An RNA of 177 nucleotides, treated with 2A3 and read out base by base. Source: RMDB library OK1LIB, as collected in RNAgym. For 2A3, 448 sequencing reads were counted.

RNA sequence: GGGAACGACUCGAGUAGAGUCGAAAAUCGUCGAUAUUGAGGCAAAAGUCUGGGUGCAAGUUUUCCAGAUUCAUGAUCACAGGUCCAAGGAGACUAUUCGAGAUGCUCUGAAAACUUUCAGCUGAAAACUGAGGGUCGUGUUCGCACGACCCUCAGUAAAAGAAACAACAACAACAAC
Reactivity to 2A3 in 0.01 (KOAc 150mM, MgCl2 10mM, bicine 150mM(pH8.5), 24C), signal-to-noise 1, nucleotides 027 to 126: u070c000g040u000c150g030a030u040a030u030u070g250a110g020g050c090a120a100a000a000g110u030c040u040g000g000g180u050g100c110a040a000g020u000u100u180u120c010c030a070g000a000u080u100c020a040u070g060a060u020c040a000c000a080g000g030u000c000c000a050a020g180g060a100g010a000c060u160a170u000u100c080g000a000g060a070u040g000c000u000c000u130g000a080a120a080a110c000u070u080u050c020a070g010c110u070g030a040a030a050
Background
The RNA was probed in 150 mM KOAc, 10 mM MgCl2 and 150 mM bicine (pH 8.5) at 24 C.